[RMDB]
RNA sequence: GGGAACGACUCGAGUAGAGUCGAAAAUUUUUAUUUGUUUUUUGUUUUGGGUUAUUAUGCAGCAUUUUUCGAGUCUACUAUGUAUUAACCCAUUACGUAUAGACUGCUUUCAGUUACUUUGGUUGCAGAUAGAAGGGGAUUUCGAUCUUUUUCUAUCAAAAGAAACAACAACAACAAC
Reactivity to 2A3 in 0.01 (KOAc 150mM, MgCl2 10mM, bicine 150mM(pH8.5), 24C), signal-to-noise 1, nucleotides 027 to 126: u070u080u050u010u020a150u100u100u110g020u010u030u060u000u000u030g020u030u000u020u020g020g020g000u070u000a100u070u040a020u120g070c000a000g000c000a030u000u000u000u000u140c030g000a000g000u000c000u000a010c030u010a000u090g040u010a020u060u080a040a040c000c000c000a000u000u030a000c030g000u000a000u040a050g040a030c010u030g060c010u110u170u100c080a060g030u080u130a080c070u190u260u130g040g000u000u070g030c000a000
Reactivity to DMS in 0.01 (KOAc 150mM, MgCl2 10mM, bicine 150mM(pH8.5), 24C), signal-to-noise 1, nucleotides 027 to 126: u000u010u020u040u020a050u060u010u010g000u000u000u000u000u030u050g010u000u010u000u000g010g010g000u000u000a010u050u020a060u000g020c040a050g000c080a040u040u000u020u040u010c070g000a050g020u000c010u000a080c060u000a050u020g020u000a000u010u000a030a080c010c000c000a010u010u000a030c040g000u000a050u030a070g010a120c040u020g000c090u010u010u020c070a060g010u020u000a040c080u010u010u000g000g000u020u010g000c070a040
The record gives the reactivity of an RNA of 177 nucleotides to 2A3 and DMS. Source: RMDB library OK1LIB, as collected in RNAgym. For DMS, 2,214 sequencing reads were counted.